[RMDB]
RNA sequence: GGGAACGACUCGAGUAGAGUCGAAAAUUCGGCUGCCAUGAGCGUAUUUACUCGUACAAAGAUGAUGCAAUAAGGAGAGUCGAUAUUCAAUGGCGACCUUCACCACGGUUUGGCGAUAGCGUCAACAGGAUCCCUCAUAGUUCGCUAUGAGGGAUCCAAAAGAAACAACAACAACAAC
Reactivity to DMS in 0.01 (KOAc 150mM, MgCl2 10mM, bicine 150mM(pH8.5), 24C), signal-to-noise 1, nucleotides 027 to 126: u000u000c120g020g000c020u030g000c010c050a030u020g000a100g000c220g000u000a020u000u000u050a000c020u000c020g030u000a130c100a080a080a080g000a180u000g000a160u000g020c080a030a120u010a070a250g030g000a140g020a040g000u000c020g010a070u000a000u040u000c150a080a060u000g000g000c040g000a070c050c020u000u000c080a090c020c000a050c300g010g040u020u000u000g020g000c000g020a050u000a060g020c020g000u020c020a010a040c190a090
Reactivity to 2A3 in 0.01 (KOAc 150mM, MgCl2 10mM, bicine 150mM(pH8.5), 24C), signal-to-noise 2, nucleotides 027 to 126: u070u060c030g030g000c010u070g000c000c000a050u060g080a040g020c040g000u000a000u010u050u000a030c010u000c000g050u100a070c070a070a170a050g090a080u210g030a050u180g020c080a120a110u170a210a060g080g000a100g000a030g030u040c010g020a010u010a050u040u010c040a010a040u010g010g010c000g010a110c000c000u070u070c090a080c030c020a050c100g120g000u030u030u040g030g000c030g010a050u160a160g300c030g010u020c000a000a000c000a040
This 177-nucleotide RNA was probed chemically with DMS and 2A3. For 2A3, 1,131 sequencing reads were counted. It was measured as part of the RMDB library OK2TST. The RNA was probed in 150 mM KOAc, 10 mM MgCl2 and 150 mM bicine (pH 8.5) at 24 C. For DMS, 590 sequencing reads were counted. For DMS the reverse transcriptase was MarathonRT.